[RMDB]
RNA sequence: GGGAACGACUCGAGUAGAGUCGAAAAUACAUUUCUAACCUAGUCCUCUCAAGAGAGAAACUAGGACUCACUACCGAUGAUGUGGCUGCGUUAGAGGCUAUUGAACGUAGGCUGAUGGCAAUACAGUCGAGGGACAGAAGAGUGCCUAUUCCUAUCCGUUAUAGACCGUUUUCGAACGGUCUAUAACAAAAGAAACAACAACAACAAC
Reactivity to DMS in 0.01 (KOAc 150mM, MgCl2 10mM, bicine 150mM(pH8.5), 24C), signal-to-noise 2, nucleotides 027 to 156: u020a070c040a170u000u000u000c030u020a150a300c020c000u000a050g010u000c030c020u000c000u000c020a140a240g000a170g000a030g000a100a070a020c000u000a020g030g000a130c040u000c020a070c030u000a080c040c030g000a050u000g010a090u010g040u000g000g050c000u010g010c040g020u000u000a140g020a120g020g040c060u000a050u030u000g000a050a060c090g020u020a080g050g030c030u000g000a120u010g030g000c070a070a070u000a050c100a030g060u000c030g000a120g030g010g010a100c060a120g000a100a070g020a130g010u010g020c030c030u000a130u000u000c040c010u000a130u010c110c140
Reactivity to 2A3 in 0.01 (KOAc 150mM, MgCl2 10mM, bicine 150mM(pH8.5), 24C), signal-to-noise 3, nucleotides 027 to 156: u080a000c030a030u110u120u090c060u080a100a110c000c000u010a010g000u040c060c010u040c010u050c140a260a080g080a020g000a000g000a230a060a030c010u000a030g010g010a030c000u010c010a040c060u050a080c020c050g090a090u040g020a040u050g040u050g090g000c010u020g000c020g060u060u030a040g000a010g090g070c040u070a100u070u130g050a080a020c070g020u040a040g010g090c020u010g010a040u070g070g000c030a020a080u080a100c030a050g050u010c010g040a080g010g020g030a050c040a040g110a100a010g030a010g030u040g000c020c010u040a060u020u040c000c000u030a120u050c030c030